[RMDB]
RNA sequence: GGGAACGACUCGAGUAGAGUCGAAAAUGCUCACCUGACCCUGCAGGCAUCAAGAAAAAAGAAUGGCGCGGAGGAGAAGAAGUCCUUCAGGGAUCCCCGGGGAAACCUGGAGGAAGUCGAGGUCGGGGGCUUCGGACUACUCCUUCGUGAGACAGGACACAAUUAGGUAGUUCGCUACCUAAUUGUGAAAAGAAACAACAACAACAAC
Reactivity to 2A3 in 0.01 (KOAc 150mM, MgCl2 10mM, bicine 150mM(pH8.5), 24C), signal-to-noise 1, nucleotides 027 to 156: u070g010c020u000c020a030c000c000u010g040a070c000c020c000u020g000c030a000g000g020c010a040u160c100a150a150g200a170a130a040a020a000a030g090a130a060u040g060g010c010g040c000g020g000a010g000g020a020g000a120a050g040a090a010g140u010c000c000u010u030c010a010g040g000g000a010u030c030c020c030c090g200g020g000g030a020a110a020c000c000u000g010g000a010g010g000a000a030g000u000c000g030a030g000g060u090c040g110g000g000g000g000c000u010u000c020g060g000a020c060u050a030c000u030c000c000u020u000c000g050u000g020a010g010a000c000a000g000g020a010